The record gives the reactivity of an RNA of 177 nucleotides to DMS. Reactivities are given for positions 27 through 126.
RNA sequence: GGGAACGACUCGAGUAGAGUCGAAAACCUUUCAUCCUCCAAGAACCAUUGUAAAACUCGCAGUGACAAAGAGAGUGGGUAGGGUUUGAGGCCCCUGUUCCUGAGGACUUGAGUGCUGUUUUACAUAGUCUGGUGUAACAUUCGUGUUACACCAGACAAAAGAAACAACAACAACAAC
Reactivity to DMS in 0.01 (KOAc 150mM, MgCl2 10mM, bicine 150mM(pH8.5), 24C), signal-to-noise 2, nucleotides 027 to 126: c030c000u000u020u000c050a070u010c020c020u000c010c070a090a150g000a090a150c080c020a100u000u010g030u010a040a000a120a130c060u010c110g010c030a060g000u040g040a090c100a070a110a100g000a100g000a060g070u030g020g000g030u020a010g000g000g020u010u010u010g030a100g010g000c070c010c000c060u040g000u030u000c000c020u020g030a180g010g020a020c100u030u010g020a110g000u010g020c070u000g000u000u010u000u010a030c150a050u010a120
The reactions ran in a buffer of 150 mM KOAc, 10 mM MgCl2 and 150 mM bicine (pH 8.5), at 24 C.
DMS adducts were read by reverse transcription with MarathonRT.